[RMDB]
RNA sequence: GGGAACGACUCGAGUAGAGUCGAAAAUUAAAGCACAUGAAGCACGCGAAGCACGGCAAGCAGUACAAGCACUACAAGCAGUACAAGCAGCGCAAGCAGUAGUAGCAGCCGAAGCACAUGAAAAAAAACAAUAAGUGAAGUUCGCUUCACUUAUUGUAAAAGAAACAACAACAACAAC
Reactivity to DMS in 0.01 (KOAc 150mM, MgCl2 10mM, bicine 150mM(pH8.5), 24C), signal-to-noise 5, nucleotides 027 to 126: u020u020a090a110a100g010c040a070c090a080u000g010a110a080g020c020a060c080g010c050g000a080a070g010c060a060c130g020g000c050a060a130g020c030a070g000u000a040c070a040a100g000c030a040c060u000a060c130a070a090g000c020a060g020u000a030c060a040a110g010c040a060g000c040g010c070a060a090g010c040a040g010u000a040g010u000a060g010c040a050g000c030c040g010a040a060g010c050a050c070a050u010g000a000a000a000a080a050a050a120
Reactivity to 2A3 in 0.01 (KOAc 150mM, MgCl2 10mM, bicine 150mM(pH8.5), 24C), signal-to-noise 3, nucleotides 027 to 126: u070u040a080a020a010g050c010a010c010a080u100g070a050a010g000c010a010c040g070c030g050a050a000g010c030a020c080g030g000c030a050a030g010c010a010g010u050a020c020a080a070g020c020a040c050u120a030c030a060a060g010c010a010g030u030a020c020a070a040g010c010a000g000c040g010c050a040a020g030c030a010g020u080a000g000u030a020g020c010a000g000c020c020g030a020a000g010c020a010c030a080u150g070a070a020a010a010a000a000a010
The data come from the RNA Mapping Database (RMDB), library M2PK90. Chemical mapping of a 177-nucleotide RNA with DMS and 2A3. For 2A3 the reverse transcriptase was SuperScript II with manganese. The reactions ran in a buffer of 150 mM KOAc, 10 mM MgCl2 and 150 mM bicine (pH 8.5), at 24 C. For 2A3, 6,066 sequencing reads were counted. The DMS profile rests on 5,046 reads.